[RMDB]
RNA sequence: GGGAACGACUCGAGUAGAGUCGAAAAACGGUGCGGAAGUUCGCGCUUCCGUGAAACGCGAAAAUCGGACGGUGGCUGCAAGUCGCAUCGCAAAACCGCGGCAAGUGGAGUUAGCGAGAGGAGGCUCAAACCAUCCAACACUUCGGUGUUGGAUGAAACAUAAUGGAGCUUUCGAGCUCCAUUAUGUAAAAGAAACAACAACAACAAC
Reactivity to DMS in 0.01 (KOAc 150mM, MgCl2 10mM, bicine 150mM(pH8.5), 24C), signal-to-noise 2, nucleotides 027 to 156: a050c040g050g040u010g010c000g000g000a100a090g020u000u000c210g030c260g040c010u000u000c020c090g190u000g000a070a040a020c020g010c020g010a060a000a170a060u000c050g040g030a080c000g000g010u020g000g010c000u000g070c010a050a130g010u000c020g030c030a160u000c020g050c030a090a070a040a140c050c050g020c030g030g020c060a050a080g050u000g000g020a100g030u010u000a110g000c030g000a110g020a070g010g000a080g010g030c040u000c040a060a050a140c100c000a020u000c000c010a000a030c000a020c000u000u000c300g030g020u010g020u000u000g000g000a000u000g000a020a090
Reactivity to 2A3 in 0.01 (KOAc 150mM, MgCl2 10mM, bicine 150mM(pH8.5), 24C), signal-to-noise 4, nucleotides 027 to 156: a000c020g010g010u040g010c010g010g010a040a040g040u070u140c060g040c020g000c070u020u010c010c000g000u000g040a100a110a020c060g030c020g060a060a030a000a070u120c030g020g020a010c020g010g020u050g030g000c090u120g020c070a040a030g020u030c010g020c030a020u040c020g010c020a050a040a000a010c040c020g020c010g030g030c090a080a060g020u040g020g050a090g030u070u070a020g040c030g040a020g000a010g030g020a020g030g000c000u030c080a060a080a030c040c000a000u000c000c000a000a000c000a000c000u060u110c240g100g000u000g000u010u020g000g000a000u000g000a000a010